Record summary:
Chemical mapping of a 177-nucleotide RNA with DMS and 2A3. For DMS, 6,680 sequencing reads were counted. The RNA was probed in 150 mM KOAc, 10 mM MgCl2 and 150 mM bicine (pH 8.5) at 24 C. The 2A3 profile rests on 22,145 reads. For 2A3 the reverse transcriptase was SuperScript II with manganese. Values cover nucleotides 27 to 126.
[RMDB]
RNA sequence: GGGAACGACUCGAGUAGAGUCGAAAAGACCAAUCGUUCGCGAUUGGUCAAAAGGUGGUUGCUACGCUACCGAAGUAGCAAAAGUGCAGCUACAAAGCACAAAAACUUGGUUGUUCGCAACCAAGAACCAUUAAUGAAGGUUCGCCUUCAUUAAUGGAAAAGAAACAACAACAACAAC
Reactivity to DMS in 0.01 (KOAc 150mM, MgCl2 10mM, bicine 150mM(pH8.5), 24C), signal-to-noise 5, nucleotides 027 to 126: g010a010c000c000a010a010u000c000g030u000u010c220g040c020g010a010u000u000g000g010u000c000a010a040a070a100g010g030u000g010g010u000u000g010c000u000a070c150g000c040u010a060c020c150g020a080a170g010u000a000g010c020a050a030a090a120g000u000g010c010a040g010c070u000a030c110a090a090a100g010c130a040c120a080a070a080a090a130c010u000u000g000g010u000u000g010u010u020c210g000c000a010a000c000c000a000a000g000a050a130
Reactivity to 2A3 in 0.01 (KOAc 150mM, MgCl2 10mM, bicine 150mM(pH8.5), 24C), signal-to-noise 6, nucleotides 027 to 126: g000a000c000c000a000a000u010c010g040u050u060c240g000c000g120a000u010u010g010g000u010c000a000a020a000a000g100g000u010g010g020u010u020g010c020u050a030c060g000c000u010a020c010c080g130a240a030g000u010a000g000c000a020a030a040a080g080u050g010c010a000g010c010u030a030c030a050a150a020g110c090a050c020a120a090a030a050a020c010u000u000g010g010u010u010g030u040u070c240g010c080a000a000c000c000a000a000g000a000a040